[RMDB]
RNA sequence: GGGAACGACUCGAGUAGAGUCGAAAAAGAGGGAAACCCAUCGACUGUCACCAGAUGCUGCAUCACCUGAUCACUGAUGGCUCAACGGUAUCCGGCGGUACAACUGAAUACUUGUAGCUGCCUUUUGAAAAGGAGUUCAUCUUCGGAUGAACUCCAAGCGUAAAAGCGAGUUCGCUCGCUUUUACGCAAAAGAAACAACAACAACAAC
Reactivity to 2A3 in 0.01 (KOAc 150mM, MgCl2 10mM, bicine 150mM(pH8.5), 24C), signal-to-noise 1, nucleotides 027 to 156: a000g020a030g000g010g000a050a060a040c040c010c010a100u070c050g090a100c080u070g010u100c000a040c030c000a030g020a110u050g000c040u090g000c050a040u050c000a000c020c030u060g010a060u060c010a020c040u050g000a030u030g040g050c000u020c070a120a050c120g030g000u060a070u080c040c050g000g000c000g010g000u040a000c000a020a030c080u120g110a120a120u110a140c060u040u000g010u020a020g040c010u000g000c000c050u120u140u060u080g110a060a020a020a030g020g000a010g000u000u000c010a000u000c000u010u030c090g200g000a000u000g000a000a000c000u010c000c000a000a000